[RMDB]
This 177-nucleotide RNA was probed chemically with 2A3. Reactivities are given for positions 27 through 126. It was measured as part of the RMDB library RFM100. The reactions ran in a buffer of 150 mM KOAc, 10 mM MgCl2 and 150 mM bicine (pH 8.5), at 24 C. For 2A3 the reverse transcriptase was SuperScript II with manganese.
RNA sequence: GGGAACGACUCGAGUAGAGUCGAAAAAGCGAAGUCUUAUCAGACUAAUUGAUUGAACUUUAAUUUUCGGAUAAUCCCAUUCUCAGGAAUACGCUUCCUAUAUUUUGGAAUUUGCUAAAUUUCAGGCACCGAGCUAUACCUUCGGGUAUAGCUCGGUAAAAGAAACAACAACAACAAC
Reactivity to 2A3 in 0.01 (KOAc 150mM, MgCl2 10mM, bicine 150mM(pH8.5), 24C), signal-to-noise 1, nucleotides 027 to 126: a000g000c000g000a140a000g000u030c030u000u040a000u110c040a000g140a280c140u070a030a100u180u100g080a000u060u080g110a000a000c010u000u060u160a120a280u040u080u000u000c010g110g100a010u100a060a190u250c000c000c000a000u080u020c100u000c060a040g040g070a080a000u170a100c150g000c080u000u000c000c000u030a000u000a100u250u120u100u000g000g040a010a010u000u070u100g020c130u170a000a000a300u000u010u000c040a040g000g000c080